[RMDB]
RNA sequence: GGGAACGACUCGAGUAGAGUCGAAAAGAUCUCGUCGUAGCCGCGGUUGAUGAACAGCGUAUCCCACAUCCUGCGGCCGAACAGGAUCGAUUGCGUCGCAUGGAUGUACUCGAAGCCGCAGCAGUAAUACUAGGAGGCUGUUCGCAGCCUCCUAGUAAAAAGAAACAACAACAACAAC
Reactivity to DMS in 0.01 (KOAc 150mM, MgCl2 10mM, bicine 150mM(pH8.5), 24C), signal-to-noise 1, nucleotides 027 to 126: g030a110u000c000u000c030g000u000c060g020u000a140g070c030c010g030c020g010g020u010u000g010a260u010g000a030a100c230a090g000c000g000u000a060u010c000c000c030a080c030a030u000c020c000u010g000c010g000g000c000c030g000a050a030c060a150g000g010a110u010c150g000a130u000u000g000c130g010u000c000g020c000a050u020g000g010a010u000g000u000a110c170u000c020g020a110a100g070c040c020g020c070a050g010c030a110g010u000a070a110
Reactivity to 2A3 in 0.01 (KOAc 150mM, MgCl2 10mM, bicine 150mM(pH8.5), 24C), signal-to-noise 1, nucleotides 027 to 126: g070a080u090c050u020c030g140u070c030g100u070a060g000c010c010g000c010g010g020u010u090g060a150u110g000a070a070c090a010g150c010g010u060a250u130c000c010c000a010c000a000u000c000c000u020g020c000g000g020c020c030g070a120a080c010a070g200g080a130u090c040g010a020u010u140g030c110g010u000c030g000c030a030u190g000g070a000u010g040u000a060c060u210c150g020a020a030g030c010c000g000c030a000g000c020a020g000u060a100a000
Chemical mapping of a 177-nucleotide RNA with DMS and 2A3. The RNA was probed in 150 mM KOAc, 10 mM MgCl2 and 150 mM bicine (pH 8.5) at 24 C. For DMS the reverse transcriptase was MarathonRT.